The record gives the reactivity of an RNA of 177 nucleotides to DMS and 2A3. It was measured as part of the RMDB libraries RFM100 and RFMREP. The RNA was probed in 150 mM KOAc, 10 mM MgCl2 and 150 mM bicine (pH 8.5) at 24 C.

[RMDB]
RNA sequence: GGGAACGACUCGAGUAGAGUCGAAAAACGCCUUUUCCUCUAUGGCUAUGAAAGCGUGGACAACGGAGAUCAAAUAGACCAAUUACUGAAUAUGGCUUUUGACAUAUCUUCUUCUUCAUGGGUGAGGUACGAAUCGGGGAUUCGUCCCCGAUUCGUAAAAAGAAACAACAACAACAAC
Reactivity to DMS in 0.01 (KOAc 150mM, MgCl2 10mM, bicine 150mM(pH8.5), 24C), signal-to-noise 3, nucleotides 027 to 126: a140c140g000c000c010u000u010u010u000c020c000u000c060u020a080u030g020g010c060u000a090u010g000a070a110a140g040c070g060u000g010g000a050c110a090a070c230g010g000a030g010a020u010c060a000a020a030u010a010g000a100c030c010a050a090u000u000a160c240u010g000a030a080u000a090u020g010g000c010u010u010u010u000g000a060c210a090u040a090u000c040u000u000c020u000u010c070u010u000c010a060u050g000g000g020u020g000a100g020g010
Reactivity to 2A3 in 0.01 (KOAc 150mM, MgCl2 10mM, bicine 150mM(pH8.5), 24C), signal-to-noise 4, nucleotides 027 to 126: a000c050g030c010c000u050u100u020u060c010c000u000c010u020a070u090g100g000c010u010a050u120g160a140a110a020g090c030g060u080g030g020a010c040a030a020c120g060g020a040g020a050u030c040a030a030a030u140a170g080a170c010c030a040a080u100u100a130c130u110g060a080a110u160a130u090g010g000c000u040u030u020u040g030a010c020a060u130a040u050c010u070u020c000u050u000c000u020u030c010a020u020g000g060g000u060g030a010g010g010
For DMS the reverse transcriptase was MarathonRT.